This 207-nucleotide RNA was probed chemically with 2A3 and DMS. DMS adducts were read by reverse transcription with MarathonRT. 2A3 adducts were read by reverse transcription with SuperScript II with manganese. High DMS reactivity at an A or C suggests that its Watson-Crick edge is free. The RNA was probed in 150 mM KOAc, 10 mM MgCl2 and 150 mM bicine (pH 8.5) at 24 C. The data come from the RNA Mapping Database (RMDB), library OK3TST.
[RMDB]
RNA sequence: GGGAACGACUCGAGUAGAGUCGAAAAAGUGCGGAUAAGAAGCUGAAUAGAGCCAUUAAGAAAGCAUUAAAAGAUGGUAUUGACUAUGGUGUAGGAUAUCUCGUUGAUAUUGACGGAAAAUACUUCUCCCCUCACCCAUUAAGGGUUUUCAAGCAUGCAUGACACAUAGUUUCGACUAUGUGUCAUGAAAAGAAACAACAACAACAAC
Reactivity to 2A3 in 0.01 (KOAc 150mM, MgCl2 10mM, bicine 150mM(pH8.5), 24C), signal-to-noise 4, nucleotides 027 to 156: a000g080u060g000c030g010g050a020u040a110a030g070a050a020g020c030u060g040a070a040u090a080g090a020g040c000c010a020u050u040a030a030g050a100a060a000g040c040a040u070u170a100a070a030a030g090a080u080g000g030u040a070u070u090g010a030c010u020a020u080g000g030u050g040u100a010g020g070a010u020a040u060c140u030c070g070u030u160g030a090u020a040u110u100g030a010c000g020g010a050a030a050a030u120a080c000u080u050c010u030c020c050c000c000u020c030a020c000c000c020a020u130u140a110a130g000g000g030u030u000u090u090c020a030a000g030c020a010u130g020
Reactivity to DMS in 0.01 (KOAc 150mM, MgCl2 10mM, bicine 150mM(pH8.5), 24C), signal-to-noise 5, nucleotides 027 to 156: a080g020u000g030c010g010g000a140u000a070a090g000a080a110g020c040u000g010a080a120u010a090g010a110g020c020c010a100u000u010a090a140g010a090a070a110g000c050a060u000u000a060a070a060a170g010a110u000g020g030u000a090u000u000g010a150c050u000a100u000g020g010u000g020u000a100g030g000a080u000a060u000c010u000c160g020u010u000g010a070u000a070u010u000g020a120c050g010g010a050a050a040a080u000a040c050u000u000c050u000c020c000c000c010u000c030a050c010c000c030a170u000u000a090a140g010g010g020u000u000u000u000c020a030a060g050c080a120u000g010